[RMDB]
RNA sequence: GGGAACGACUCGAGUAGAGUCGAAAAGACGAAGAUAGCGAAAGCUAGAAAAGAUCCGUGGCUAAAGAGGAAACUGAAGAGAGCUGCUCGGAUGAGAAGCCGUGCCACGGAAGCAGCUCUAAGAGAACGUAGGACUCGUAUUCGUACGAGUCCUACGAAAAGAAACAACAACAACAAC
Reactivity to 2A3 in 0.01 (KOAc 150mM, MgCl2 10mM, bicine 150mM(pH8.5), 24C), signal-to-noise 3, nucleotides 027 to 126: g070a020c080g030a070a010g050a170u080a010g000c000g090a090a020a000g000c000u050a020g070a010a160a000a000g070a040u020c010c000g000u000g010g000c100u190a140a210a010g160a070g020g130a100a100a050c210u200g110a120a020g070a020g000a000g060c000u000g000c000u000c020g060g000a040u060g030a020g000a140a030g060c000c000g010u020g030c010c010a030c000g000g000a000a000g010c000a000g000c000u010c020u040a050a050g050a020g010a190a000
Reactivity to DMS in 0.01 (KOAc 150mM, MgCl2 10mM, bicine 150mM(pH8.5), 24C), signal-to-noise 3, nucleotides 027 to 126: g010a130c080g000a160a150g010a230u020a000g000c000g010a160a120a180g010c000u000a020g000a130a070a060a060g000a070u000c000c000g000u020g000g000c030u010a060a060a110g020a080g000g010a030a040a130c090u060g000a050a160g020a010g020a020g020c000u010g000c000u000c000g020g020a100u000g060a160g000a110a200g000c020c010g010u030g020c000c000a010c000g010g000a030a000g010c000a000g000c000u000c000u000a080a090g000a150g040a060a210
The record gives the reactivity of an RNA of 177 nucleotides to 2A3 and DMS. It was measured as part of the RMDB library OK1LIB. DMS adducts were read by reverse transcription with MarathonRT.